[RMDB]
Source: RMDB library OK3TST, as collected in RNAgym. This 207-nucleotide RNA was probed chemically with DMS and 2A3. For 2A3 the reverse transcriptase was SuperScript II with manganese.
RNA sequence: GGGAACGACUCGAGUAGAGUCGAAAAGAAGAAGUGUCUGAACCAUCUCAGGCUGAAGUCGAGGAUGCCCUCGAUCAACUGAGCGAAGACGAAGAGAAGGAAUCGCUGAUCGCACAGCUUGCCGAGCUUGGUGUUAAGGCCGACAAGCGAUCUUCGGUGAUAGGAUGAUCUUCGGAUCAUCCUAUCAAAAAGAAACAACAACAACAAC
Reactivity to DMS in 0.01 (KOAc 150mM, MgCl2 10mM, bicine 150mM(pH8.5), 24C), signal-to-noise 2, nucleotides 027 to 156: g010a090a080g020a050a090g020u010g030u020c020u020g000a120a140c080c070a120u010c060u010c040a040g020g010c080u000g020a100a150g010u000c040g010a040g000g020a220u030g040c280c030c000u000c000g000a070u000c050a040a160c040u010g000a100g000c090g020a120a110g010a080c050g030a070a110g010a070g030a070a070g020g010a100a150u000c060g020c020u010g000a080u020c030g000c020a110c090a120g030c000u000u020g000c030c030g010a130g040c020u000u000g010g000u000g000u000u000a060a050g010g030c000c010g000a010c010a020a040g000c010g040a090u000c000u020u000c010g020g000
Reactivity to 2A3 in 0.01 (KOAc 150mM, MgCl2 10mM, bicine 150mM(pH8.5), 24C), signal-to-noise 2, nucleotides 027 to 156: g120a060a010g040a030a040g070u070g020u100c030u030g050a100a070c030c030a110u050c000u010c010a050g060g000c090u050g030a090a010g060u010c010g000a010g000g060a300u300g090c040c000c000u010c000g000a020u040c000a000a090c040u010g020a000g020c030g040a030a050g030a010c040g000a050a020g020a010g010a110a000g060g010a040a030u050c040g010c040u040g040a100u020c030g010c030a030c040a070g000c000u030u050g010c030c060g030a040g040c050u060u080g010g020u040g070u220u180a030a010g020g010c020c000g020a020c030a060a000g030c010g040a030u000c000u020u000c040g050g040
About this RNA: Reactivities are given for positions 27 through 156.